[RMDB]
RNA sequence: GGGAACGACUCGAGUAGAGUCGAAAACGACUACGUGAGGAAGGACAGGUUCAGACUUCGCGUGUCCUUUUUGUUUGUGUCUGUCUCGUAAAAACUCGGUGCCAAAACAAAGGGUGGUCCGAUGUGGCGAUAAGAAAACAUUCGUGUUUUUUUAUCGAAAAGAAACAACAACAACAAC
Reactivity to 2A3 in 0.01 (KOAc 150mM, MgCl2 10mM, bicine 150mM(pH8.5), 24C), signal-to-noise 6, nucleotides 027 to 126: c010g020a000c020u070a010c080g050u080g030a010g010g020a040a020g050g010a000c010a010g060g000u050u040c030a020g030a050c040u060u040c080g000c020g100u020g050u010c000c000u010u030u000u020u060g120u020u060u120g070u010g020u000c040u020g030u000c010u000c010g020u050a010a040a010a020a010c010u020c010g020g020u070g020c000c010a050a060a050a050c070a100a160a080g070g020g040u030g020g010u010c000c000g010a040u120g020u030g030g040
Reactivity to DMS in 0.01 (KOAc 150mM, MgCl2 10mM, bicine 150mM(pH8.5), 24C), signal-to-noise 8, nucleotides 027 to 126: c170g000a060c030u030a030c060g010u000g000a030g010g010a050a100g000g010a010c020a080g010g010u020u010c070a050g000a270c070u010u010c050g000c040g000u000g000u010c010c010u010u010u010u000u010g000u000u000u010g020u010g000u000c050u010g000u000c000u000c010g000u020a040a050a050a100a050c030u000c010g010g000u030g000c010c020a020a040a060a100c200a070a070a140g000g010g030u010g000g010u010c000c010g000a030u020g010u010g010g010